RNA sequence: GGGAACGACUCGAGUAGAGUCGAAAAGAUAUGGAAGUGCGAGGAUCGAACCUCCGAAGAACAAAAGCAUGCGUUCGGAAACGAACGCAUGCUUUUGGGAGGAGAGUUCGGGAGCACUUCCUAAGUCCAUCCUGGUUAAGUUCGCUUAACCAGGAUGAAAAGAAACAACAACAACAAC
Reactivity to DMS in 0.01 (KOAc 150mM, MgCl2 10mM, bicine 150mM(pH8.5), 24C), signal-to-noise 2, nucleotides 027 to 126: g020a090u010a300u020g000g000a020a020g020u000g020c000g030a150g000g020a130u010c000g010a010a020c000c020u000c000c000g010a130a160g010a170a230c000a000a000a000a000g040c010a020u000g030c010g010u000u000c000g000g000a140a090a280c010g000a040a000c000g010c000a000u000g000c010u000u000u000u000g000g010g000a150g010g000a010g000a110g030u010u010c000g000g010g010a120g000c000a010c000u000u000c000c000u010a020a100g000u010c060
Conditions: 150 mM KOAc, 10 mM MgCl2 and 150 mM bicine (pH 8.5), 24 C. An RNA of 177 nucleotides, treated with DMS and read out base by base. In probing experiments dimethyl sulfate is read out at A N1 and C N3, which are open when not base-paired. It was measured as part of the RMDB library TTRINS. Reactivities are given for positions 27 through 126.